[RMDB]
RNA sequence: GGGAACGACUCGAGUAGAGUCGAAAACUGACCUUGUUCGCAAGGUCAGAAAGGGAAAUGGACUGAGCGCCGCCGACCGCCAAACAACCGGCAAAAAGAAAAAAACUGUAAGCUUCGGCUUACAGAACAUAUCGUAGGACUUCGGUCCUACGAUAUGAAAAGAAACAACAACAACAAC
Reactivity to 2A3 in 0.01 (KOAc 150mM, MgCl2 10mM, bicine 150mM(pH8.5), 24C), signal-to-noise 1, nucleotides 027 to 126: c020u010g000a010c010c000u000u000g010u060u020c040g010c150a010a000g000g000u030c010a000g000a070a020a000g020g000g040a010a060a110u160g010g000a010c010u070g100a050g060c050g020c000c000g000c000c010g030a050c010c010g000c050c000a080a130a090c020a020a060c070c020g000g010c060a000a080a050a050a000g070a070a120a000a040a000a000a040c000u000g020u000a000a010g000c000u030u140c300g040g020c000u070u010a000c000a000g000a010a000
Reactivity to DMS in 0.01 (KOAc 150mM, MgCl2 10mM, bicine 150mM(pH8.5), 24C), signal-to-noise 2, nucleotides 027 to 126: c000u000g000a010c010c000u010u010g000u010u000c170g020c000a020a000g000g000u000c000a010g000a020a050a050g000g000g020a040a090a090u010g010g010a060c040u000g010a160g040c070g010c040c050g000c020c060g000a090c090c010g000c030c020a050a070a100c140a030a110c130c040g010g020c140a040a080a030a060a150g020a060a030a120a120a120a110a120c010u000g000u000a040a000g020c010u000u020c230g010g010c000u010u000a000c000a010g050a040a140
The record gives the reactivity of an RNA of 177 nucleotides to 2A3 and DMS. Reactivities are given for positions 27 through 126. For DMS the reverse transcriptase was MarathonRT. The reactions ran in a buffer of 150 mM KOAc, 10 mM MgCl2 and 150 mM bicine (pH 8.5), at 24 C. For DMS, 915 sequencing reads were counted. In probing experiments dimethyl sulfate is read out at A N1 and C N3, which are open when not base-paired.